[RMDB]
RNA sequence: GGGAACGACUCGAGUAGAGUCGAAAACCAUAGGAUUUCGAUCCUAUGGCCUGCUAUGUCGCGUAAUAGCUUUUCGACUCUACUUGGGUCGUUCCCACGCGAUGGGGACCGGUUUCGACCGGUCCAAAUCACCAUUACCAUUCGUGGUAAUGGUGAUAAAAGAAACAACAACAACAAC
Reactivity to DMS in 0.01 (KOAc 150mM, MgCl2 10mM, bicine 150mM(pH8.5), 24C), signal-to-noise 3, nucleotides 027 to 126: c020c000a000u000a000g010g000a020u000u000u010c150g020a020u000c000c000u000a000u000g000g010c200c130u000g010c000u000a010u000g000u010c200g010c240g010u000a090a020u000a010g000c010u000u000u000u000c000g000a020c000u000c000u000a000c000u000u000g000g000g000u000c000g000u000u000c010c000c000a010c050g010c110g010a100u000g010g010g020g000a010c000c010g010g000u000u000u030c180g010a010c000c000g010g000u000c010c000a000a020
The record gives the reactivity of an RNA of 177 nucleotides to DMS. DMS adducts were read by reverse transcription with MarathonRT. Reactivities are rounded to 0.1 and cut off at 0 and 3. Values cover nucleotides 27 to 126. The reactions ran in a buffer of 150 mM KOAc, 10 mM MgCl2 and 150 mM bicine (pH 8.5), at 24 C.